[RMDB]
RNA sequence: GGGAACGACUCGAGUAGAGUCGAAAAAAGCAUGAUUCUGGGAAGGGGUCCACUACGUGGAAGAGAAGCCACGUAUGGGAGCUUCUGUGGAUCCUUAAGGUUUGUGGCCCCUCGUAAGCCCGGUCUGCAUCAUAUGAGCAUUCGUGCUCAUAUGAUGAAAAGAAACAACAACAACAAC
Reactivity to DMS in 0.01 (KOAc 150mM, MgCl2 10mM, bicine 150mM(pH8.5), 24C), signal-to-noise 6, nucleotides 027 to 126: a050a060g010c070a040u030g000a030u020u010c030u030g000g000g020a170a030g010g000g000g000u020c000c010a060c040u010a020c020g030u000g000g000a040a050g010a160g010a110a080g010c010c020a020c010g000u010a040u020g000g010g000a120g000c020u020u010c080u020g000u010g000g000a050u000c010c050u000u020a080a090g010g020u020u010u020g030u020g000g000c000c010c000c010u010c170g010u020a110a100g010c010c010c000g000g010u020c020u010g000
Reactivity to 2A3 in 0.01 (KOAc 150mM, MgCl2 10mM, bicine 150mM(pH8.5), 24C), signal-to-noise 7, nucleotides 027 to 126: a000a030g130c130a080u180g010a090u200u120c100u180g020g030g020a090a030g030g000g000g010u050c010c000a010c020u030a010c020g010u020g020g050a060a040g070a030g010a210a020g030c000c000a010c000g010u020a070u090g030g010g010a050g030c010u130u070c030u130g130u160g070g010a060u010c000c010u040u050a050a060g110g030u050u170u150g070u070g030g000c000c000c010c020u030c030g130u090a070a070g040c000c000c000g010g020u020c020u020g020
An RNA of 177 nucleotides, treated with DMS and 2A3 and read out base by base. The DMS profile rests on 21,130 reads. 2A3 adducts were read by reverse transcription with SuperScript II with manganese.